The data come from the RNA Mapping Database (RMDB), library OK2TRN.
An RNA of 177 nucleotides, treated with 2A3 and DMS and read out base by base.
High DMS reactivity at an A or C suggests that its Watson-Crick edge is free.
RNA sequence: GGGAACGACUCGAGUAGAGUCGAAAAGCGAGAAGUGGUUCACCAGUCUCAAAACACAUGAUGUGUCUUCUCAUAGUGUGUGUCAUGAUCGCAUGUGUAUCCGCCUCCUUGACUGCACCUAUCGUUGAUCCGGUAUAUAUUUCGAUAUAUACCGGAUAAAAGAAACAACAACAACAAC
Reactivity to 2A3 in 0.01 (KOAc 150mM, MgCl2 10mM, bicine 150mM(pH8.5), 24C), signal-to-noise 9, nucleotides 027 to 126: g050c050g010a020g020a140a020g080u030g030g040u090u080c030a040c070c010a020g050u020c020u010c070a070a100a040a010c030a000c010a040u100g040a160u100g170u020g040u060c060u170u030c030u050c020a030u090a090g100u100g010u020g000u000g020u070c020a060u110g030a070u060c030g020c070a050u080g040u030g020u110a090u040c030c020g010c000c010u040c010c010u040u050g050a120c020u030g010c030a050c030c020u090a090u170c070g120u080u140g070
Reactivity to DMS in 0.01 (KOAc 150mM, MgCl2 10mM, bicine 150mM(pH8.5), 24C), signal-to-noise 9, nucleotides 027 to 126: g020c090g010a050g010a100a100g020u000g000g010u000u000c090a060c080c050a110g000u000c040u000c070a070a080a100a040c040a020c020a070u010g010a070u010g010u010g010u000c130u000u000c050u000c030a060u010a100g020u000g020u000g010u000g010u000c070a070u010g010a090u000c080g010c050a050u000g010u000g010u000a070u000c040c060g010c030c020u000c030c010u000u010g010a070c050u000g000c050a080c030c040u000a090u000c110g010u010u000g000